RNA sequence: GGGAACGACUCGAGUAGAGUCGAAAAGAUAUGGAGGGUUAGCACUUUUGACGCGAUCAUGGUCGGAAACGACCAUGGUCGCGAUAAGUGCGACCCUCCUAAGUCAAAGUACGUGUUCGCACGUACACGUUUUACUGCAGUUCGCUGCAGUAAAACGAAAAGAAACAACAACAACAAC
Reactivity to 2A3 in 0.01 (KOAc 150mM, MgCl2 10mM, bicine 150mM(pH8.5), 24C), signal-to-noise 1, nucleotides 027 to 126: g030a000u080a050u160g000g020a010g000g000g040u000u110a100g050c010a020c030u100u090u090u300g300a190c170g000c000g000a000u000c020a000u000g000g000u000c000g000g060a040a070a100c000g000a000c000c000a000u000g010g000u000c000g000c000g000a010u000a000a000g010u000g000c000g000a000c010c000c020u000c000c010u010a000a010g020u000c030a050a050a010g010u000a000c010g020u010g030u040u110c300g000c110a000c000g010u000a000c020a010
Reactivity to DMS in 0.01 (KOAc 150mM, MgCl2 10mM, bicine 150mM(pH8.5), 24C), signal-to-noise 3, nucleotides 027 to 126: g000a030u000a300u000g020g010a030g010g010g020u000u000a080g030c010a010c000u000u010u020u000g030a260c090g030c010g020a020u000c000a000u000g000g010u010c000g020g000a090a070a210c000g000a010c000c000a000u000g000g000u000c000g010c000g000a000u000a000a010g030u000g010c010g010a000c000c000c000u000c000c000u000a010a070g000u010c060a130a080a180g030u000a010c000g030u000g000u000u010c280g020c010a010c030g030u000a000c010a140